[RMDB]
RNA sequence: GGGAACGACUCGAGUAGAGUCGAAAAGCUCUAGGAGACUAGAGCGAUACGUUAGAGAGCUAGUGGCAUGACUAACGGAUAGCCAGGUACGAGGUUGCCAGAGGACAUAGCUAUAGCUAUGUCCAAACUCCUAUCAUACGUUCGCGUAUGAUAGGAGAAAAGAAACAACAACAACAAC
Reactivity to 2A3 in 0.01 (KOAc 150mM, MgCl2 10mM, bicine 150mM(pH8.5), 24C), signal-to-noise 4, nucleotides 027 to 126: g010c000u000c000u000a020g010g030a040g020a080c000u000a000g000a000g000c020g000a030u030a020c020g010u050u040a030g020a010g030a020g120c040u070a040g070u090g160g010c030a050u120g080a190c020u020a030a000c010g010g020a070u050a060g120c030c030a030g090g000u040a040c060g050a060g040g100u070u050g010c000c010a040g020a090g090g000a000c000a010u000a000g020c020u150a030u090a300g000c000u000a000u000g000u000c000c000a010a010a000
Reactivity to DMS in 0.01 (KOAc 150mM, MgCl2 10mM, bicine 150mM(pH8.5), 24C), signal-to-noise 5, nucleotides 027 to 126: g000c000u000c000u000a010g000g000a260g000a280c000u000a000g010a010g020c000g000a050u020a010c030g000u000u000a030g010a230g000a150g020c050u010a070g020u030g010g000c030a080u020g000a160c040u010a040a030c020g020g000a070u020a090g030c040c000a110g000g020u010a050c090g000a060g010g000u010u000g020c030c030a070g000a300g010g000a000c000a010u000a010g000c000u020a070u030a100g000c000u010a000u010g010u000c000c000a000a040a070

Structure probing data (2A3 and DMS) for a 177-nucleotide construct. DMS adducts were read by reverse transcription with MarathonRT. It was measured as part of the RMDB library OK1LIB. The 2A3 profile rests on 3,320 reads.